[RMDB]
RNA sequence: GGGAACGACUCGAGUAGAGUCGAAAAUCAUUGAGAUGCUGGGCGCUAUGGUCGUCCUCCUCCGGCUGACCUCCUUCUCAGCUGCUGACCGGCGCCGCACAGGCGGCAUGUCAGCUUCGUGUGCAAAAAAAGAAUGGUCGGUUCGCCGACCAUUCAAGAGAUAUGACUUGUUCGCAAGUCAUAUCUCAAAAGAAACAACAACAACAAC
Reactivity to 2A3 in 0.01 (KOAc 150mM, MgCl2 10mM, bicine 150mM(pH8.5), 24C), signal-to-noise 2, nucleotides 027 to 156: u110c050a040u050u140g040a080g030a080u120g050c060u050g020g020g000c030g010c080u180a150u240g000g080u150c010g030u020c030c000u020c000c030u020c030c020g060g010c030u020g020a040c010c030u060c020c010u090u060c030u000c030a000g010c020u010g000c000u010g000a000c000c040g020g070c020g050c010c000g000c010a120c030a050g180g020c000g040g010c000a010u060g000u030c000a000g000c010u030u060c050g040u050g070u070g040c060a000a080a000a000a000a000a100g020a010a000u000g000g000u000c020g020g000u050u040c110g000c110c000g000a010c000c000a000u010u000c000a000a010
Reactivity to DMS in 0.01 (KOAc 150mM, MgCl2 10mM, bicine 150mM(pH8.5), 24C), signal-to-noise 1, nucleotides 027 to 156: u000c070a110u010u040g000a140g000a050u000g020c040u000g020g000g000c050g020c020u080a050u000g140g020u020c000g020u010c080c070u000c030c030u000c060c010g040g070c020u000g000a070c040c040u010c090c030u000u000c030u000c010a030g000c000u000g000c020u000g000a050c050c120g040g050c040g060c020c000g000c070a070c160a170g000g000c040g030g070c020a090u000g010u000c020a110g000c020u010u000c090g000u000g080u030g000c070a010a000a110a100a030a160a100g020a030a030u000g000g030u000c000g020g020u000u000c300g020c040c000g000a030c000c000a010u000u000c000a020a070
This 207-nucleotide RNA was probed chemically with 2A3 and DMS.
Values cover nucleotides 27 to 156.
For DMS, 2,415 sequencing reads were counted.
The reactions ran in a buffer of 150 mM KOAc, 10 mM MgCl2 and 150 mM bicine (pH 8.5), at 24 C.
DMS adducts were read by reverse transcription with MarathonRT.
As a SHAPE reagent, 2A3 marks flexible, mostly unpaired nucleotides at the ribose 2'-OH.